The record gives the reactivity of an RNA of 177 nucleotides to 2A3.
[RMDB]
RNA sequence: GGGAACGACUCGAGUAGAGUCGAAAAAUCGACCAAUCCGCGGGCAUCCGUUACCGAAAUCCCAAGUGCAGCAGCUACAUCGCUGACCCCUAGCUCGUGGGUUAGCGACAUCAUGAGCAGGGUGUCCUCUGCAAAUCUCCUUCGGGAGAUUUGCAGAAAAAGAAACAACAACAACAAC
Reactivity to 2A3 in 0.01 (KOAc 150mM, MgCl2 10mM, bicine 150mM(pH8.5), 24C), signal-to-noise 1, nucleotides 027 to 126: a010u090c010g000a010c000c010a000a030u120c040c030g120c080g010g000g060c010a010u000c010c000g030u060u050a110c040c040g050a160a000a000u020c000c000c000a050a020g040u000g000c000a010g000c000a000g000c040u030a050c020a030u030c000g000c030u000g000a000c000c000c000c020u050a060g040c000u020c090g010u130g000g050g000u000u010a040g010c000g090a030c000a050u020c090a030u150g070a010g000c000a060g060g000g000u120g000u010c000c060

As a SHAPE reagent, 2A3 marks flexible, mostly unpaired nucleotides at the ribose 2'-OH. The reactions ran in a buffer of 150 mM KOAc, 10 mM MgCl2 and 150 mM bicine (pH 8.5), at 24 C.